RNA sequence: GGGAACGACUCGAGUAGAGUCGAAAAGUUUGCCGGGGUGUUGACGGUCGGCCUCAUGGUCGUGUUUUUCGCAGGCUUUGGAUUAUUCAUCUGGAAAGACGCGCACAAGCGGAAAAAACCGUAGGUCAACGAGAUAUAAUUUCGAUUAUAUCUCGUUAAAAGAAACAACAACAACAAC
Reactivity to DMS in 0.01 (KOAc 150mM, MgCl2 10mM, bicine 150mM(pH8.5), 24C), signal-to-noise 8, nucleotides 027 to 126: g010u010u020u010g010c010c010g010g010g010g010u000g010u010u000g010a060c060g010g010u000c060g010g010c020c010u000c110a090u020g010g010u010c010g010u010g000u000u000u000u000u000c010g010c020a040g000g010c250u020u020u010g020g020a150u020u040a110u020u010c050a090u010c000u000g000g000a030a020a020g010a020c020g010c020g020c150a050c060a060a100g010c110g000g010a000a050a070a080a080a060c020c010g000u000a070g010g010u010c140
Reactivity to 2A3 in 0.01 (KOAc 150mM, MgCl2 10mM, bicine 150mM(pH8.5), 24C), signal-to-noise 6, nucleotides 027 to 126: g100u100u120u120g060c000c000g010g000g010g010u030g000u020u090g020a030c020g010g030u050c020g020g000c000c010u050c020a090u160g040g030u070c010g000u010g010u010u020u000u000u030c090g020c090a010g000g010c000u110u160u170g070g020a060u070u080a080u240u250c030a070u010c020u000g010g020a020a010a010g020a000c010g010c000g010c030a010c020a130a040g040c020g020g010a040a060a020a010a040a040c020c000g020u040a030g010g090u060c040